[RMDB]
RNA sequence: GGGAACGACUCGAGUAGAGUCGAAAAGUCUCCUGGACGCUUCCGCCCGCUCGGGAUGGGCCUCAGUGCCGACGAGGAGUCCGCAGGUGGGAGGAUCAGCCACCGGAGAGGGACGCGAUGGUAAGAGGGCAUACAAUAAGUUCGCUUAUUGUAUGCCAAAAGAAACAACAACAACAAC
Reactivity to DMS in 0.01 (KOAc 150mM, MgCl2 10mM, bicine 150mM(pH8.5), 24C), signal-to-noise 3, nucleotides 027 to 126: g020u000c030u000c000c010u000g030g000a170c150g010c050u000u000c020c020g010c010c000c010g040c020u010c080g010g010g000a040u000g010g040g000c010c000u000c070a170g020u010g020c090c110g010a100c090g000a050g020g010a190g010u000c000c020g020c080a100g000g010u000g010g000g010a040g000g000a040u000c130a070g010c030c130a130c020c040g000g000a070g010a060g000g000g010a070c080g000c090g000a080u000g000g000u010a040a090g010a130g020
Reactivity to 2A3 in 0.01 (KOAc 150mM, MgCl2 10mM, bicine 150mM(pH8.5), 24C), signal-to-noise 2, nucleotides 027 to 126: g010u000c000u010c010c000u020g000g020a020c030g000c030u040u000c010c010g000c000c020c010g030c000u090c030g030g030g070a060u050g050g150g060c000c020u070c030a120g040u090g210c020c020g070a080c050g000a010g050g010a030g030u000c000c020g080c080a030g000g070u030g010g010g020a020g000g000a060u100c090a020g020c000c000a030c020c020g000g000a030g010a000g020g010g010a020c040g010c030g040a030u060g020g050u060a070a030g060a040g130

Source: RMDB library 15KREP, as collected in RNAgym. An RNA of 177 nucleotides, treated with DMS and 2A3 and read out base by base. DMS adducts were read by reverse transcription with MarathonRT. The 2A3 profile rests on 2,854 reads. The reactions ran in a buffer of 150 mM KOAc, 10 mM MgCl2 and 150 mM bicine (pH 8.5), at 24 C.